The record gives the reactivity of an RNA of 207 nucleotides to 2A3 and DMS. For DMS, 3,098 sequencing reads were counted. Source: RMDB library OK3TST, as collected in RNAgym. Values are in units of 0.01, from 0 to 300, in steps of 10.
RNA sequence: GGGAACGACUCGAGUAGAGUCGAAAACUGGUGGCGAUGCCUGCUACAAUGCCUUUGAUGACUUUCACAGAACCUGCAUUGCCGUGGCUAGAAGUGAGGAUGGUGGUUGUACCUGGGGAGACAAACAAUGCCCCUUGGUGCCUGCUGCUUUCGUGCCUCUGGGGUAAUGUUUCGACAUUACCCCAGAAAAAGAAACAACAACAACAAC
Reactivity to 2A3 in 0.01 (KOAc 150mM, MgCl2 10mM, bicine 150mM(pH8.5), 24C), signal-to-noise 2, nucleotides 027 to 156: c040u030g020g040u070g040g000c030g010a060u040g050c020c020u070g050c030u050a020c050a060a180u150g040c060c000u110u070u090g120a130u120g020a050c060u100u150u140c120a100c020a090g050a100a060c000c030u020g030c030a070u030u050g010c030c060g030u020g020g010c020u050a070g010a090a060g170u060g000a050g040g010a050u100g020g030u010g040g000u030u090g020u020a030c010c000u020g000g000g040g000a160g020a040c030a000a210a000c030a070a090u100g010c000c010c000c000u000u030g000g010u010g010c000c000u020g020c030u000g040c030u050u090u070c040g040u010g050c010c030
Reactivity to DMS in 0.01 (KOAc 150mM, MgCl2 10mM, bicine 150mM(pH8.5), 24C), signal-to-noise 2, nucleotides 027 to 156: c010u000g050g010u000g020g000c050g010a070u010g000c040c050u000g030c030u000a070c070a050a080u000g010c010c050u020u000u000g020a100u020g000a100c050u000u000u000c110a140c030a080g020a070a070c070c030u010g030c050a080u000u030g050c040c030g000u010g030g000c000u030a090g020a170a090g010u000g000a080g020g010a100u000g000g020u020g010g020u010u000g000u000a050c030c040u010g020g000g020g040a130g030a230c090a050a110a090c120a070a210u000g000c000c000c000c030u020u020g000g020u000g000c030c130u010g010c020u000g000c030u010u000u000c040g020u000g030c220c100